[RMDB]
RNA sequence: GGGAACGACUCGAGUAGAGUCGAAAAGUGCAGAUUGAAAUUCAUGGGAGCCUCUCCAUAAUGGAUGAACGCCGCGCUAGUGCGCGCAGUCGCGACGUAAACGCUCUGUUUUCCCGUUCAGGCCUCAAUAUAGCCUCCUGUUCGCAGGAGGCUAUAUAAAAGAAACAACAACAACAAC
Reactivity to DMS in 0.01 (KOAc 150mM, MgCl2 10mM, bicine 150mM(pH8.5), 24C), signal-to-noise 1, nucleotides 027 to 126: g010u000g000c010a010g000a100u000u000g000a110a170a040u000u010c020a020u000g000g000g000a040g020c160c100u000c040u000c000c000a190u000a120a050u010g000g030a010u000g000a120a070c040g020c030c020g030c000g010c000u020a130g010u010g000c130g010c040g040c060a040g000u020c030g010c030g010a040c030g020u010a050a100a180c100g030c030u010c020u010g000u000u000u000u010c000c000c020g040u000u000c150a060g000g010c020c050u020c100a070
This 177-nucleotide RNA was probed chemically with DMS.
The DMS profile rests on 941 reads.